[RMDB]
RNA sequence: GGGAACGACUCGAGUAGAGUCGAAAACACAUUACGACCAUCGCCAUGGAGUCCACCGGCGUUUACUGGUUGCCUGCUUUUGAGAUCCUUGAAGCCGCGGGUUUCAAUGUGAUCCUCGUAAAUGCCAGUAAACGUCCUGUUUCGACAGGACGUUUACAAAAGAAACAACAACAACAAC
Reactivity to 2A3 in 0.01 (KOAc 150mM, MgCl2 10mM, bicine 150mM(pH8.5), 24C), signal-to-noise 5, nucleotides 027 to 126: c110a000c010a130u090u270a090c020g050a020c020c010a020u070c030g000c020c000a040u110g050g010a040g070u030c030c010a040c000c050g010g000c000g000u040u050u040a040c040u000g020g020u050u070g060c020c010u080g020c020u120u110u090u080g060a090g010a030u000c000c000u010u010g000a000a000g010c000c010g250c160g170g020g000u000u000u000c000a020a030u110g070u210g030a000u010c020c030u010c000g010u010a020a060a040u150g020c020c020a030
Reactivity to DMS in 0.01 (KOAc 150mM, MgCl2 10mM, bicine 150mM(pH8.5), 24C), signal-to-noise 2, nucleotides 027 to 126: c130a100c200a090u020u030a050c100g010a100c110c030a040u010c060g000c050c050a040u020g020g000a070g030u010c020c070a050c160c130g010g010c020g000u000u010u000a000c060u000g000g000u000u010g050c060c030u000g000c130u010u010u000u000g000a040g000a030u000c000c000u000u000g010a010a020g000c050c000g000c100g030g080g020u000u000u000c010a000a000u020g010u020g000a020u000c080c010u000c060g000u000a030a090a020u000g000c000c000a050
This 177-nucleotide RNA was probed chemically with 2A3 and DMS.
The 2A3 profile rests on 3,877 reads.
2A3 adducts were read by reverse transcription with SuperScript II with manganese.
The RNA was probed in 150 mM KOAc, 10 mM MgCl2 and 150 mM bicine (pH 8.5) at 24 C.
The DMS profile rests on 3,009 reads.